[RMDB]
RNA sequence: GGGAACGACUCGAGUAGAGUCGAAAAAAAAGAUAUGGAGCCAAGAACUACCCAUGUUAGCUCUUGGACCUCUAUUCGGAAACGAAUAGAGCUAGAGCUUUCAUGGGCUUGGCUCCUAAGUCAAAAACAUAGAAUAACGGUUCGCCGUUAUUCUAUGAAAAGAAACAACAACAACAAC
Reactivity to 2A3 in 0.01 (KOAc 150mM, MgCl2 10mM, bicine 150mM(pH8.5), 24C), signal-to-noise 1, nucleotides 027 to 126: a000a010a000a060g030a000u020a000u110g000g020a020g000c000c010a010a000g010a080a080c220u300a070c300c000c010a000u000g000u010u000a000g000c000u020c060u060u100g030g060a110c000c030u040c000u000a000u000u010c010g000g030a030a040a060c020g000a000a000u000a000g000a000g030c010u050a030g010a010g030c030u000u000u020c010a000u000g000g080g010c000u010u000g000g010c000u000c000c010u000a000a000g010u010c000a050a070a000a010a090
Reactivity to DMS in 0.01 (KOAc 150mM, MgCl2 10mM, bicine 150mM(pH8.5), 24C), signal-to-noise 3, nucleotides 027 to 126: a120a060a120a120g010a030u010a300u020g020g000a020g020c000c000a000a020g010a060a030c070u010a300c040c000c000a020u000g020u010u000a000g020c000u000c010u000u000g020g000a060c300c000u010c000u000a000u000u000c000g020g000a090a050a100c000g010a030a020u000a000g000a020g030c040u000a010g000a010g010c000u000u000u000c000a000u000g000g000g010c000u000u000g000g000c000u000c000c000u000a000a040g010u000c020a050a080a090a130a180